RNA sequence: GGGAACGACUCGAGUAGAGUCGAAAAAGAAAAAGGAAUGGUUCAUCUCCUGGGUGGGAGGAAACAGGACAGUGUAAGAUUUAAUCCUGCUACUCAAAAUGCACAAUUCAAAACUUAUGAAUUGUUUUUCUGAAAUUUUCCACUUAAUAUUUUCAGAGUGGUAUCACUCAUUCGUGAGUGAUACCACAAAAGAAACAACAACAACAAC
Reactivity to 2A3 in 0.01 (KOAc 150mM, MgCl2 10mM, bicine 150mM(pH8.5), 24C), signal-to-noise 1, nucleotides 027 to 156: a000g000a000a010a000a000a000g040g030a040a040u160g000g130u120u040c040a020u040c030u010c020c030u020g010g020g070u180g010g030g010a080g010g000a050a040a020c010a010g000g060a030c010a030g020u040g010u230a110a110g050a130u100u110u200a000a060u020c000c000u000g060c000u050a000c030u020c090a050a050a050a050u190g000c020a000c000a050a030u000u000c010a050a100a230a300c060u230u160a130u130g030a010a010u020u000g030u000u130u000u040u060c010u030g000a040a100a100u100u080u090u080c000c100a070c000u150u210a160a100u080a220u300u070u020u060c010a000g060a000
Structure probing data (2A3) for a 207-nucleotide construct. Values cover nucleotides 27 to 156. Values are in units of 0.01, from 0 to 300, in steps of 10. The data come from the RNA Mapping Database (RMDB), library OK3TST. 2A3 adducts were read by reverse transcription with SuperScript II with manganese. Conditions: 150 mM KOAc, 10 mM MgCl2 and 150 mM bicine (pH 8.5), 24 C.